[RMDB]
This 177-nucleotide RNA was probed chemically with DMS and 2A3.
The RNA was probed in 150 mM KOAc, 10 mM MgCl2 and 150 mM bicine (pH 8.5) at 24 C.
The DMS profile rests on 1,241 reads.
DMS adducts were read by reverse transcription with MarathonRT.
Values cover nucleotides 27 to 126.

RNA sequence: GGGAACGACUCGAGUAGAGUCGAAAACAGCAGGCCACUGCUCAAGUGACUGUUAUUGUGCAACCUGAAAACAAUAAGCCUCCUCAGGCAGAUGCAGGCCCAGAUAAAGAGCUGACCCUUCCUGUGGCAUGAUGGUUGGGUUCGCCCAACCAUCAUGAAAAGAAACAACAACAACAAC
Reactivity to DMS in 0.01 (KOAc 150mM, MgCl2 10mM, bicine 150mM(pH8.5), 24C), signal-to-noise 1, nucleotides 027 to 126: c080a050g030c050a040g000g010c060c020a040c030u000g000c110u020c080a050a100g040u020g010a060c020u000g000u000u000a050u000u000g010u010g010c120a070a090c020c010u000g010a080a040a150a060c120a030a050u000a090a100g000c000c020u000c080c040u020c080a040g000g020c020a060g000a060u000g000c050a100g020g000c010c030c000a100g000a130u010a040a110a070g000a060g020c020u010g000a110c040c030c010u000u000c010c020u000g010u020g000g020
Reactivity to 2A3 in 0.01 (KOAc 150mM, MgCl2 10mM, bicine 150mM(pH8.5), 24C), signal-to-noise 1, nucleotides 027 to 126: c000a000g050c000a000g060g000c130c000a010c010u080g040c040u030c100a090a040g000u000g090a010c020u040g050u200u050a050u100u190g080u040g150c030a120a120c010c020u060g050a030a090a150a030c020a130a060u300a270a050g000c040c020u020c000c070u070c030a010g020g020c000a020g010a080u230g060c000a000g000g070c020c030c000a000g060a040u200a040a090a020g030a060g030c040u030g040a050c060c000c000u000u020c020c010u060g000u040g070g000